[RMDB]
RNA sequence: GGGAACGACUCGAGUAGAGUCGAAAACAAGCUGAAGAAGGCCAGCAUAUAUGACCUUGAGUAUGGUGAUGUGCCACAAUGCAUGAAAUCAGAUACCCUCCAGUACACCAGUGACAAGCCUCCUGGCUAACGAAAAGUGUUUCGACACUUUUCGUUAAAAAGAAACAACAACAACAAC
Reactivity to 2A3 in 0.01 (KOAc 150mM, MgCl2 10mM, bicine 150mM(pH8.5), 24C), signal-to-noise 1, nucleotides 027 to 126: c020a000a070g000c000u040g050a070a000g070a050a020g110g010c030c000a020g020c110a040u090a010u020a030u220g080a140c020c000u070u060g040a020g090u100a070u150g000g080u040g050a070u060g050u060g010c000c010a060c060a100a070u090g030c030a000u080g100a070a110a020u050c010a010g050a070u120a080c010c000c000u020c030c000a000g010u020a030c020a010c030c030a020g020u000g060a030c010a030a030g010c010c010u080c010c010u030g020g000c000
Reactivity to DMS in 0.01 (KOAc 150mM, MgCl2 10mM, bicine 150mM(pH8.5), 24C), signal-to-noise 5, nucleotides 027 to 126: c090a110a120g010c040u000g010a120a090g020a110a040g000g010c030c040a050g030c100a060u000a110u020a090u010g010a060c020c020u010u000g010a090g010u000a040u000g010g000u020g000a090u000g010u010g010c010c040a070c130a080a090u000g010c040a070u010g000a040a080a060u010c040a020g010a140u010a090c060c020c010u000c030c020a090g010u010a050c080a060c030c030a040g000u010g000a050c090a030a100g010c060c030u000c040c030u000g000g000c170